[RMDB]
RNA sequence: GGGAACGACUCGAGUAGAGUCGAAAAGAUAUGGAAGUUCUCGAUUGCCGAGGAUCUGCUUGACUAUUGUAAUCGGAAACGAUUACAAUAGUCAAGCAGGGAGGCAAAUGAGAGACUUCCUAAGUCACUUGUAGAUAUAGUUCGCUAUAUCUACAAGAAAAGAAACAACAACAACAAC
Reactivity to DMS in 0.01 (KOAc 150mM, MgCl2 10mM, bicine 150mM(pH8.5), 24C), signal-to-noise 4, nucleotides 027 to 126: g010a060u000a300u010g000g000a010a010g000u000u000c000u000c000g010a140u000u000g020c000c000g000a060g020g010a010u010c000u000g000c000u000u000g010a040c000u000a000u000u000g010u000a000a010u010c000g000g000a150a100a250c010g020a020u000u000a000c000a010a000u000a000g000u000c000a010a010g010c010a010g000g000g000a000g040g010c000a000a010a060u010g010a130g000a050g000a040c010u000u000c000c000u010a020a100g010u010c040a230
Reactivity to 2A3 in 0.01 (KOAc 150mM, MgCl2 10mM, bicine 150mM(pH8.5), 24C), signal-to-noise 2, nucleotides 027 to 126: g020a020u090a060u180g000g000a010a020g030u180u040c010u010c020g090a220u020u100g000c010c040g070a220g020g020a010u000c000u000g000c010u030u000g010a000c000u000a010u030u000g010u010a010a010u000c010g040g030a130a060a010c010g000a000u000u000a000c000a000a000u010a000g000u000c000a010a000g010c010a010g000g000g000a000g000g000c000a000a040a080u170g000a040g010a010g040a010c010u000u020c000c000u010a090a040g030u000c020a010

Source information
Chemical mapping of a 177-nucleotide RNA with DMS and 2A3. It was measured as part of the RMDB library TTRINS. Reactivities are given for positions 27 through 126. DMS adducts were read by reverse transcription with MarathonRT. Conditions: 150 mM KOAc, 10 mM MgCl2 and 150 mM bicine (pH 8.5), 24 C.